[RMDB]
Background:
An RNA of 177 nucleotides, treated with 2A3 and DMS and read out base by base. The 2A3 profile rests on 94,483 reads. Source: RMDB library OK1LIB, as collected in RNAgym. DMS adducts were read by reverse transcription with MarathonRT.
RNA sequence: GGGAACGACUCGAGUAGAGUCGAAAAACUAGUAUGUACAGGGGUGAGUUGACCUGUCAUCUAGACUGCUGACCAUCAACUCACCGGUCAGCUGGAUGAUGUCCACAGAGUACGACAUCAGUACUCAGUGAAUUGACUACUUCGGUGGUCGAUUCACAAAAGAAACAACAACAACAAC
Reactivity to 2A3 in 0.01 (KOAc 150mM, MgCl2 10mM, bicine 150mM(pH8.5), 24C), signal-to-noise 9, nucleotides 027 to 126: a000c010u010a010g060u140a070u050g070u090a010c000a010g030g030g030g050u140g080a130g050u060u060g090a070c000c010u000g000u000c000a000u000c000u010a010g060a100c040u030g000c000u000g000a000c010c000a040u100c030a040a090c060u040c090a060c030c050g000g000u000c000a000g000c010u010g030g020a050u100g010a030u080g070u040c020c020a060c060a080g030a010g020u030a010c050g070a030c090a150u100c020a050g010u010a010c010u000c020a000
Reactivity to DMS in 0.01 (KOAc 150mM, MgCl2 10mM, bicine 150mM(pH8.5), 24C), signal-to-noise 4, nucleotides 027 to 126: a190c010u000a010g000u040a010u000g010u060a010c010a010g000g000g000g000u010g010a080g020u000u010g000a070c020c020u000g000u000c000a000u000c010u000a020g000a170c050u010g000c010u000g010a010c000c050a130u030c100a050a050c100u010c080a060c160c140g000g000u000c000a010g000c000u010g000g000a130u020g000a080u020g010u010c020c040a100c220a110g010a040g010u000a020c050g010a130c170a090u040c110a090g000u000a020c010u000c020a160